[RMDB]
An RNA of 207 nucleotides, treated with DMS and 2A3 and read out base by base. Values cover nucleotides 27 to 156. Source: RMDB library M2RFPK, as collected in RNAgym. The DMS profile rests on 2,185 reads. Conditions: 150 mM KOAc, 10 mM MgCl2 and 150 mM bicine (pH 8.5), 24 C.

RNA sequence: GGGAACGACUCGAGUAGAGUCGAAAAAGUGGCGGGCCGUACGCGGCCUGCCACAUGCAAGAGAAGAAGCGUUCAACCAAGCCGUGACAGGCAAGUCAGGGCUUCGGCGGGAAAUUGCUCUUACCAAAAAACCUCCUUUCCUUCGGGAAAGGAGGAACAAAAGUAAUGACUUCGGUCAUUACUUUUGAAAAGAAACAACAACAACAAC
Reactivity to DMS in 0.01 (KOAc 150mM, MgCl2 10mM, bicine 150mM(pH8.5), 24C), signal-to-noise 1, nucleotides 027 to 156: a120g000u000g040g030c020g030g110g050c000c010g130u000a160c300g040c030g080g040c010c000u000g020c000c000a000c000a000u000g020c090a110a140g000a100g010a100a110g000a060a080g040c000g010u010u000c020a110a030c000c000a020a050g000c000c010g000u050g010a010c010a150g060g010c260a030a070g020u000c000a090g020g010g000c010u000u000c000g050g000c070g000g010g000a010a120a070u020u010g010c020u010c070u000u030a240c030c060a020a010a070a080a090a120c010c060u000c000c000u000u010u010c010c000u000u020c230g000g030g020a010a000a020g000g030a000g000g000a020a030
Reactivity to 2A3 in 0.01 (KOAc 150mM, MgCl2 10mM, bicine 150mM(pH8.5), 24C), signal-to-noise 3, nucleotides 027 to 156: a000g000u000g000g000c000g000g000g000c020c000g010u030a040c250g010c010g080g000c010c000u000g030c000c000a020c000a000u000g000c020a030a010g010a000g020a090a000g030a080a010g000c000g020u040u020c020a020a020c000c000a000a000g000c000c020g210u010g010a020c010a060g070g300c060a060a030g020u000c010a030g040g040g020c000u080u110c150g020g000c020g030g100g040a020a040a020u120u150g000c000u000c010u030u080a100c030c070a040a040a030a010a020a120c000c000u000c000c000u000u000u000c010c000u030u050c150g070g000g000a000a000a000g000g000a000g000g000a000a000